[RMDB]
RNA sequence: GGGAACGACUCGAGUAGAGUCGAAAAGUAAAGGCGAGUGAGAAGAUCACAGAAUGCCAAAAGCACGCUUAGAAUCGGACAUCUCUGAGCAAAAGUGCACGCAAUAAGCGAAAGAUGCCGAAAAAAAACAUCAAAUUUCUUUCGAGAAAUUUGAUGUAAAAGAAACAACAACAACAAC
Reactivity to 2A3 in 0.01 (KOAc 150mM, MgCl2 10mM, bicine 150mM(pH8.5), 24C), signal-to-noise 1, nucleotides 027 to 126: g050u030a140a000a000g070g060c050g020a020g050u010g000a040g000a100a120g070a020u000c020a030c020a020g130a170a050u220g000c030c000a110a000a000a000g030c030a010c020g000c000u000u040a030g050a070a040u140c040g000g030a050c040a020u000c040u000c080u120g020a000g000c000a080a080a080a000g130u090g000c020a020c070g000c030a060a220u230a300a030g050c010g030a240a060a000g010a010u040g000c020c030g070a040a010a030a010a000a000a000
Reactivity to DMS in 0.01 (KOAc 150mM, MgCl2 10mM, bicine 150mM(pH8.5), 24C), signal-to-noise 1, nucleotides 027 to 126: g010u000a080a090a150g020g000c050g040a090g000u000g000a020g030a180a150g010a090u000c000a000c000a110g000a140a060u010g020c000c030a110a050a070a120g000c000a000c020g010c000u000u000a010g010a020a170u000c020g050g000a010c010a010u000c020u000c020u000g000a090g000c030a090a010a100a160g000u000g000c040a090c080g040c060a080a130u000a030a110g030c000g050a180a020a150g000a040u000g000c020c030g000a000a000a000a070a160a060a160
An RNA of 177 nucleotides, treated with 2A3 and DMS and read out base by base. For DMS, 699 sequencing reads were counted. The 2A3 profile rests on 812 reads. It was measured as part of the RMDB library M2PK90. The reactions ran in a buffer of 150 mM KOAc, 10 mM MgCl2 and 150 mM bicine (pH 8.5), at 24 C. For 2A3 the reverse transcriptase was SuperScript II with manganese.